Conditions: 150 mM KOAc, 10 mM MgCl2 and 150 mM bicine (pH 8.5), 24 C. The record gives the reactivity of an RNA of 177 nucleotides to DMS and 2A3. Reactivities are rounded to 0.1 and cut off at 0 and 3. For DMS, 3,669 sequencing reads were counted. 2A3 adducts were read by reverse transcription with SuperScript II with manganese. For 2A3, 4,118 sequencing reads were counted.

RNA sequence: GGGAACGACUCGAGUAGAGUCGAAAAGAUAUGGACCUGAGAACUACGUUAUAGCGUGGAGCUUGGAUUUAAUAUCGGAAACGAUAUUUGUCAGCUUGGCCACGCUAUAACGCUCAGGUCCUAAGUCGUUACACUUACUCUUCGGAGUAAGUGUAACAAAAGAAACAACAACAACAAC
Reactivity to DMS in 0.01 (KOAc 150mM, MgCl2 10mM, bicine 150mM(pH8.5), 24C), signal-to-noise 3, nucleotides 027 to 126: g000a080u000a300u010g000g010a010c000c000u000g000a030g020a120a060c180u020a300c010g020u000u000a000u000a020g020c010g050u010g000g000a080g010c000u000u000g020g000a020u000u020u000a000a000u000a010u010c000g020g000a110a110a210c010g010a010u000a010u000u000u000g000u000c020a030g000c070u010u010g000g000c000c000a000c020g020c000u000a000u000a010a000c020g000c010u010c010a010g000g010u000c000c000u000a000a100g010u010c090
Reactivity to 2A3 in 0.01 (KOAc 150mM, MgCl2 10mM, bicine 150mM(pH8.5), 24C), signal-to-noise 3, nucleotides 027 to 126: g070a030u240a090u190g000g000a000c010c010u040g020a040g010a190a220c300u300a040c250g000u030u000a000u020a000g000c000g000u020g010g020a020g090c000u050u160g140g000a040u300u300u240a010a010u020a010u030c000g000g000a020a090a030c020g000a010u000a010u030u010u040g040u030c020a010g090c160u070u130g290g030c010c000a000c000g000c000u000a000u000a000a000c010g000c000u010c000a010g000g010u010c000c020u010a010a000g010u000c030